Structure probing data (2A3 and DMS) for a 207-nucleotide construct.
RNA sequence: GGGAACGACUCGAGUAGAGUCGAAAACGUACGGAAACCAUCCCGGAACACACGCUCAAGAAUAGUUGCUGCAUGCGAAAGGAUGGGCAUGCGAAAGGAUGGUACCGUAACCGAACCACCGAUGCAGCUGACAAGUUGGUGUUCAAUUGCGGAUGGGCGUGGUAUAGGUAUUCGUACCUAUACCACGAAAAGAAACAACAACAACAAC
Reactivity to 2A3 in 0.01 (KOAc 150mM, MgCl2 10mM, bicine 150mM(pH8.5), 24C), signal-to-noise 3, nucleotides 027 to 156: c040g040u150a010c060g040g070a120a030a020c000c000a000u000c000c000c000g030g030a010a000c000a000c010a040c070g040c000u060c080a080a070g070a170a140u150a080g040u030u020g000c000u000g010c020a020u010g000c010g130a150a030a030g120g040a060u220g010g030g000c000a010u020g000c030g020a040a020a010g020g020a120u030g000g000u010a080c030c000g040u120a110a110c020c010g010a010a020c000c000a010c000c010g010a030u130g000c000a000g000c020u030g020a020c030a090a020g030u120u100g160g000u020g000u010u000c040a120a200u140u150g030c120g020g000a010u020g050g000g000
Reactivity to DMS in 0.01 (KOAc 150mM, MgCl2 10mM, bicine 150mM(pH8.5), 24C), signal-to-noise 3, nucleotides 027 to 156: c090g030u010a180c090g040g000a080a100a110c010c000a000u000c000c000c000g010g000a090a080c020a050c000a060c110g000c030u000c020a100a240g010a070a140u000a050g030u000u000g010c000u000g030c020a040u010g010c010g020a100a130a070g010g000a080u010g030g010g010c020a020u000g010c010g020a110a030a050g000g000a040u010g000g020u010a060c020c020g030u010a130a110c010c030g000a060a080c020c010a020c000c010g000a120u000g010c030a050g000c030u000g010a150c160a060a130g060u000u000g030g020u000g000u000u000c010a040a140u020u000g010c050g070g030a170u000g020g000g020
It was measured as part of the RMDB library OK3TST. For DMS the reverse transcriptase was MarathonRT.